[RMDB]
RNA sequence: GGGAACGACUCGAGUAGAGUCGAAAAGAUAUGGACCUAUCAGAGACACGCCGUAACUGUAGAAGACUAUCGGAAACGAUAGCCUUCGCAGAUAGUUACGGCGUGUCUCUGAGUAGGUCCUAAGUCAUCACAUAAGACACUUCGGUGUCUUAUGUGAAAAAGAAACAACAACAACAAC
Reactivity to DMS in 0.01 (KOAc 150mM, MgCl2 10mM, bicine 150mM(pH8.5), 24C), signal-to-noise 2, nucleotides 027 to 126: g020a060u010a300u010g020g010a010c010c000u000a040u000c000a000g010a010g000a020c000a020c000g040c000c000g010u000a000a010c010u000g010u000a110g010a030a010g000a020c010u000a000u000c000g010g000a130a120a210c000g000a020u000a010g020c010c000u000u000c010g020c260a140g000a040u000a010g000u020u000a010c000g000g000c000g000u000g000u000c000u000c000u000g000a010g010u000a010g020g000u000c000c000u000a000a050g010u010c040a220